[RMDB]
RNA sequence: GGGAACGACUCGAGUAGAGUCGAAAAAAAGUGUCUCUUCAUGAAAACUUUCUUAGCAUCAUUAGUCAUUAGGGAAAUGCAAAUUAAAAACACAAUGAGAUACCACCACAUACAACAUGUCUAGUAUAAUGGCUAAAAUGAAAAAUACUAACAACAAACUCCAUAGCUAGUUCGCUAGCUAUGGAGUAAAAGAAACAACAACAACAAC
Reactivity to DMS in 0.01 (KOAc 150mM, MgCl2 10mM, bicine 150mM(pH8.5), 24C), signal-to-noise 1, nucleotides 027 to 156: a040a040a070g000u000g060u000c020u000c000u000u000c100a120u020g000a090a120a110a050c060u010u000u000c070u000u000a050g030c060a020u000c040a150u000u000a000g010u010c020a020u000u000a050g010g030g030a020a030a030u000g020c010a070a020a140u000u000a040a050a110a070a080c090a050c060a140a040u000g020a060g030a100u000a060c030c020a050c020c030a080c150a150u000a150c020a020a020c050a100u010g020u000c020u030a130g020u000a030u000a000a010u010g000g010c000u010a030a030a060a030u000g010a000a070a080a100a080u000a060c040u000a010a040c090a050a080c100a060a110
Reactivity to 2A3 in 0.01 (KOAc 150mM, MgCl2 10mM, bicine 150mM(pH8.5), 24C), signal-to-noise 2, nucleotides 027 to 156: a000a000a060g050u040g050u020c020u010c000u120u090c090a100u060g030a070a090a080a070c030u090u120u000c030u160u140a050g030c040a060u090c000a010u030u010a020g020u030c010a010u010u140a050g000g030g070a050a030a030u090g030c050a100a030a070u090u120a140a110a010a030a000c060a010c030a020a140u110g010a000g020a070u040a060c000c020a050c020c000a040c030a050u150a080c040a080a000c010a050u040g020u020c010u030a020g040u010a010u010a070a000u050g000g000c000u000a080a060a010a040u100g060a000a030a030a050a030u050a040c040u050a070a020c060a030a010c000a000a180